[RMDB]
RNA sequence: GGGAACGACUCGAGUAGAGUCGAAAAUAGACAGCGGGUACAAAAGCCGCGUAAUUGAGCCACGAAAUAGGUAAACAUUGUAAGAGGCUUUCACCGUUUGGUGCGUGGGAGCGAUCGUGGACGCGCGUCUGCACUCGCAAUUCGUUGCGAGUGCAGAAAAAGAAACAACAACAACAAC
Reactivity to DMS in 0.01 (KOAc 150mM, MgCl2 10mM, bicine 150mM(pH8.5), 24C), signal-to-noise 2, nucleotides 027 to 126: u080a020g000a130c060a190g010c030g020g010g010u050a020c140a080a020a130a060g090c100c030g000c030g020u040a150a010u000u020g000a090g000c010c000a040c000g000a000a010a100u010a050g010g000u000a190a050a220c250a070u000u090g010u100a130a140g010a130g010g010c000u000u000u020c000a050c050c010g010u030u040u060g040g010u000g000c100g000u000g000g000g000a060g010c000g030a020u000c000g030u020g010g010a020c010g000c050g000c110g000
Reactivity to 2A3 in 0.01 (KOAc 150mM, MgCl2 10mM, bicine 150mM(pH8.5), 24C), signal-to-noise 1, nucleotides 027 to 126: u130a060g000a000c170a010g000c040g000g160g010u090a020c100a000a060a000a000g100c000c000g000c070g000u000a000a130u000u190g040a040g000c000c000a000c020g100a030a200a130u160a000g100g150u130a110a110a010c050a130u110u130g070u080a050a070g010a000g090g030c000u000u000u030c000a000c050c000g000u000u300u130g230g020u090g070c200g000u000g000g000g000a000g010c000g000a030u000c000g000u000g000g000a040c000g020c000g000c010g070
The record gives the reactivity of an RNA of 177 nucleotides to DMS and 2A3.
Values cover nucleotides 27 to 126.
For DMS the reverse transcriptase was MarathonRT.
Source: RMDB library RFM100, as collected in RNAgym.
2A3 is a SHAPE reagent: it acylates the 2'-hydroxyl of flexible nucleotides of all four kinds.